[RMDB]
RNA sequence: GGGAACGACUCGAGUAGAGUCGAAAAAUCAUUCCACUCCUUAUGCUUAGCCAGGACCAAUUACCCCGGACUUGUGGUUAUUUAAAAAUGGGAUGAUGGACACUAAGUGGGGAAACUAAUACUCAGACUAACUAAUCGUUUUCGAACGAUUAGUUAGAAAAGAAACAACAACAACAAC
Reactivity to 2A3 in 0.01 (KOAc 150mM, MgCl2 10mM, bicine 150mM(pH8.5), 24C), signal-to-noise 5, nucleotides 027 to 126: a000u020c010a020u030u010c010c000a040c050u070c040c010u120u170a120u270g040c010u040u060a010g010c020c040a040g040g060a130c010c010a090a130u100u100a160c000c010c010c020g030g040a050c060u050u110g040u050g090g080u050u030a120u060u270u190a120a170a020a030a030u050g020g000g000a010u040g020a010u020g030g020a020c010a010c100u040a070a040g040u100g050g040g010g000a030a060a000c060u080a090a100u080a180c040u030c070a010g030a100
Reactivity to DMS in 0.01 (KOAc 150mM, MgCl2 10mM, bicine 150mM(pH8.5), 24C), signal-to-noise 6, nucleotides 027 to 126: a040u010c060a090u000u000c010c010a090c110u000c090c040u000u000a080u000g010c080u000u000a050g010c030c040a070g000g000a110c040c020a070a110u000u000a170c080c030c030c090g010g010a100c090u000u000g020u000g010g010u000u010a040u010u000u010a020a040a060a080a090u010g000g010g000a030u000g000a030u010g000g010a150c110a090c060u000a040a070g020u000g010g010g010g000a080a060a070c150u010a040a080u010a080c080u000c040a100g000a300